[RMDB]
RNA sequence: GGGAACGACUCGAGUAGAGUCGAAAACAGCUCAAAGUUGCUAGAUUUGAGUUAAGAACUCACCCAAAAGGUGCCAUAUUUAAUAUGCCUCAUUAACUAGCACAGAUCUUACAGCAAAUAUGGCGGAGGUAUAGUAUGCGUUCGCGCAUACUAUACCAAAAGAAACAACAACAACAAC
Reactivity to 2A3 in 0.01 (KOAc 150mM, MgCl2 10mM, bicine 150mM(pH8.5), 24C), signal-to-noise 4, nucleotides 027 to 126: c010a000g000c000u000c020a040a050a030g050u090u050g000c010u020a010g010a120u000u010u020g010a000g010u050u050a090a050g060a050a040c020u000c080a100c000c000c010a030a060a010a050g200g070u170g000c000c000a010u020a050u030u070u040a220a150u130a110u190g020c010c000u070c010a030u080u110a130a080c020u030a020g010c020a030c030a050g160a100u060c030u140u170a060c070a050g060c020a000a000a050u020a010u000g030g010c070g050g050a110
Reactivity to DMS in 0.01 (KOAc 150mM, MgCl2 10mM, bicine 150mM(pH8.5), 24C), signal-to-noise 3, nucleotides 027 to 126: c110a110g010c020u000c000a000a000a030g020u010u010g010c030u000a010g010a190u000u000u000g000a020g020u000u000a100a100g010a090a120c190u010c130a130c010c000c020a100a070a120a150g000g020u000g010c040c000a010u000a020u000u000u000a070a090u000a110u000g010c080c050u000c100a100u040u000a040a130c020u000a000g000c020a050c300a120g000a090u000c100u000u000a090c150a160g000c110a030a040a020u000a010u000g000g010c020g000g010a100
Conditions: 150 mM KOAc, 10 mM MgCl2 and 150 mM bicine (pH 8.5), 24 C. An RNA of 177 nucleotides, treated with 2A3 and DMS and read out base by base. Reactivities are rounded to 0.1 and cut off at 0 and 3. For 2A3, 3,342 sequencing reads were counted.